[RMDB]
RNA sequence: GGGAACGACUCGAGUAGAGUCGAAAACACAACACAAAAAAAGCGGAGGAUCUCAAGGGGUACCUAGGUGCUCUGCUCCACCUGGAGUCCUUCUUUCCAUUUGGAGAACAGUGAUGGAAUCGCCCCGCAAAUGGUCAGAGUUCGCUCUGACCAUUUGAAAAGAAACAACAACAACAAC
Reactivity to 2A3 in 0.01 (KOAc 150mM, MgCl2 10mM, bicine 150mM(pH8.5), 24C), signal-to-noise 6, nucleotides 027 to 126: c060a010c070a080a100c080a040c160a090a100a020a030a000a020a010g070c030g010g020a040g030g010a030u030c030u080c200a080a100g030g000g010g030u080a060c010c010u040a030g030g020u030g020c020u020c030u130g020c010u010c000c000a010c000c000u010g000g010a040g080u090c030c000u030u060c000u040u030u020c020c020a050u050u050u150g130g020a120g040a120a050c060a080g070u070g140a060u030g010g010a010a020u050c050g070c000c010c010c000g000
Reactivity to DMS in 0.01 (KOAc 150mM, MgCl2 10mM, bicine 150mM(pH8.5), 24C), signal-to-noise 4, nucleotides 027 to 126: c080a100c170a080a090c160a060c170a010a000a070a050a040a120a100g000c030g000g000a080g020g000a030u030c060u010c120a060a090g010g000g000g030u050a040c020c020u000a030g010g010u000g000c020u010c030u020g000c000u010c030c010a040c030c020u000g000g010a130g000u000c090c080u010u000c070u010u000u010c000c010a120u000u020u000g000g000a080g020a120a100c170a070g010u020g000a060u000g000g000a040a070u000c080g010c010c010c010c050g020